Structure probing data (DMS and 2A3) for a 177-nucleotide construct. The 2A3 profile rests on 2,754 reads. For 2A3 the reverse transcriptase was SuperScript II with manganese.

RNA sequence: GGGAACGACUCGAGUAGAGUCGAAAAGAUAUGGAGCCCACGAGCUUAUGGUCGGAAACGACCAUGGAGCGAUGAGUGGGUCUCCUAAGUCAAAAGAUGCGCAUAAUGUUCGCAUUAUGCGCAUCAAGAUCGCACUUAAGUUCGCUUAAGUGCGAUCAAAAGAAACAACAACAACAAC
Reactivity to DMS in 0.01 (KOAc 150mM, MgCl2 10mM, bicine 150mM(pH8.5), 24C), signal-to-noise 3, nucleotides 027 to 126: g000a030u010a300u000g000g000a010g000c000c000c000a000c010g000a150g020c000u000u000a000u000g010g000u000c010g010g000a060a070a170c000g000a020c000c010a000u010g000g020a010g020c020g000a100u000g000a230g000u010g000g000g010u020c010u000c000c000u000a020a090g000u000c010a110a090a150a170g000a010u000g000c000g000c000a000u000a010a010u000g000u000u020c230g030c000a010u010u000a000u000g000c010g020c000a000u000c000a020a050
Reactivity to 2A3 in 0.01 (KOAc 150mM, MgCl2 10mM, bicine 150mM(pH8.5), 24C), signal-to-noise 1, nucleotides 027 to 126: g020a010u110a030u130g000g000a000g020c000c000c010a000c020g020a020g020c000u000u030a000u020g000g000u000c020g000g040a080a070a090c010g010a010c000c000a010u010g020g000a010g030c030g050a220u210g050a010g040u020g000g020g020u010c000u040c010c000u000a060a020g030u000c020a000a020a060a220g010a020u000g000c000g000c010a000u000a010a000u000g050u070u060c210g000c090a000u000u000a020u010g000c020g010c000a000u000c000a010a000

Notes
Reactivities are rounded to 0.1 and cut off at 0 and 3. DMS adducts were read by reverse transcription with MarathonRT. The RNA was probed in 150 mM KOAc, 10 mM MgCl2 and 150 mM bicine (pH 8.5) at 24 C.